This 207-nucleotide RNA was probed chemically with DMS and 2A3.
Source: RMDB library M2RFPK, as collected in RNAgym.
2A3 adducts were read by reverse transcription with SuperScript II with manganese.
[RMDB]
RNA sequence: GGGAACGACUCGAGUAGAGUCGAAAAAACUCUUUAAGGCAAUAACGAACUAAUUCUAAGCAAGUAAUGGAGAAAUGCCAGGGUCACUAACUAGCCAUAAUAGUGCUUGACAGUAUGAUACUAACUGAAUAUGGUAAACCGUUCGCGGUUUACCAAACUCUGGUCAAUAGUUCGCUAUUGACCAGAGAAAAGAAACAACAACAACAAC
Reactivity to DMS in 0.01 (KOAc 150mM, MgCl2 10mM, bicine 150mM(pH8.5), 24C), signal-to-noise 1, nucleotides 027 to 156: a050a030c000u000c000u000u010u000a020a060g050g060c050a050a120u020a070a090c030g010a100a160c050u010a030a070u000u000c040u000a060a070g010c050a110a110g020u000a030a060u000g000g000a070g030a100a140a040u020g000c040c010a040g030g030g010u000c010a070c030u000a060a070c050u000a050g040c030c030a080u000a120a090u000a070g040u000g000c000u000u000g010a060c050a070g020u000a070u040g030a230u000a090c110u020a050a110c070u000g010a040a140u020a120u050g010g000u010a020a010a020c000c000g070u000u020c300g080c010g060g000u000u000u000a010c010c010a000a030a010
Reactivity to 2A3 in 0.01 (KOAc 150mM, MgCl2 10mM, bicine 150mM(pH8.5), 24C), signal-to-noise 2, nucleotides 027 to 156: a000a000c180u160c050u030u210u020a050a020g050g010c060a050a010u080a160a040c100g030a050a010c080u050a020a140u160u000c030u080a100a070g010c000a100a050g010u180a070a080u140g050g070a060g080a080a040a000u040g000c020c020a050g050g000g000u060c060a010c080u030a090a040c000u000a040g000c000c020a020u010a150a120u070a190g100u140g030c060u030u060g030a010c030a000g020u090a030u050g070a060u000a120c020u040a160a050c010u020g070a060a150u090a100u180g000g000u010a000a000a000c000c000g010u020u020c180g000c030g140g000u000u000u010a000c000c010a000a020a000
Conditions: 150 mM KOAc, 10 mM MgCl2 and 150 mM bicine (pH 8.5), 24 C.